[RMDB]
RNA sequence: GGGAACGACUCGAGUAGAGUCGAAAAGAAAGAAAGAAGCGAGCUGGCGCAGCCGCACGGGCAACCGUCAAUCCAGCACUUCACAAGUUUUGUCGUUCUGACAGGACAUCCAUCAACCCACCGGGAAAAAAGGACUACAGCUUCGGCUGUAGUCCAAUCGAGAUUAAAUGUUCGCAUUUAAUCUCGAAAAAGAAACAACAACAACAAC
Reactivity to 2A3 in 0.01 (KOAc 150mM, MgCl2 10mM, bicine 150mM(pH8.5), 24C), signal-to-noise 1, nucleotides 027 to 156: g000a010a070a010g050a000a200a000g020a010a000g020c100g040a000g010c020u020g000g030c030g000c100a100g070c090c130g050c080a020c010g000g010g040c050a100a050c000c010g030u030c010a010a040u000c000c000a000g010c000a020c030u060u060c030a030c060a180a080g000u030u000u000u020g000u000c000g080u220u150c120u220g010a000c000a010g000g010a020c000a040u070c050c000a060u070c050a010a080c010c000c070a040c160c110g000g070g050a020a050a040a000a070a090g020g010a060c000u000a000c000a030g010c000u040u170c200g140g000c010u000g000u000a000g010u010c000c000a000a000